Notes: Structure probing data (2A3 and DMS) for a 177-nucleotide construct. The 2A3 profile rests on 1,935 reads. The data come from the RNA Mapping Database (RMDB), library M2PK50. The RNA was probed in 150 mM KOAc, 10 mM MgCl2 and 150 mM bicine (pH 8.5) at 24 C. DMS adducts were read by reverse transcription with MarathonRT.
[RMDB]
RNA sequence: GGGAACGACUCGAGUAGAGUCGAAAAGAAGAGAACUUCGGUUCUCUUCAAAGCUGAUACCCACGCCAAGAAAUCCCGGAACAUUGGCUCGUUAGCGGGAGAAAACCGGGAAGUUCGCUUCCCGGAACCAGCAUUAUUACUUCGGUAAUAAUGCUGGAAAAGAAACAACAACAACAAC
Reactivity to 2A3 in 0.01 (KOAc 150mM, MgCl2 10mM, bicine 150mM(pH8.5), 24C), signal-to-noise 2, nucleotides 027 to 126: g010a000a000g010a020g000a000a000c010u060u100c240g060g000u010u000c000u010c010u020u010c000a000a010a000g000c000u030g020a070u110a140c000c020c000a020c080g050c030c040a080a000g040a150a230a050u030c010c000c000g000g060a050a020c040a130u080u150g140g000c040u040c040g010u030u050a100g090c000g000g060g020a010g030a040a100a020a060c000c010g000g000g040a000a000g000u000u070c200g020c060u000u010c000c000c000g010g000a010a000
Reactivity to DMS in 0.01 (KOAc 150mM, MgCl2 10mM, bicine 150mM(pH8.5), 24C), signal-to-noise 2, nucleotides 027 to 126: g000a010a030g020a040g020a010a000c000u000u000c180g020g010u000u000c000u000c000u000u000c000a000a100a120g020c070u000g000a100u000a130c000c020c010a050c140g000c050c050a070a060g030a090a100a110u000c000c040c020g000g000a040a040c100a100u000u000g000g020c080u000c170g000u000u000a050g020c020g010g020g030a090g000a080a070a080a100c020c000g000g000g000a010a020g000u000u020c220g010c010u000u000c000c000c000g030g000a040a030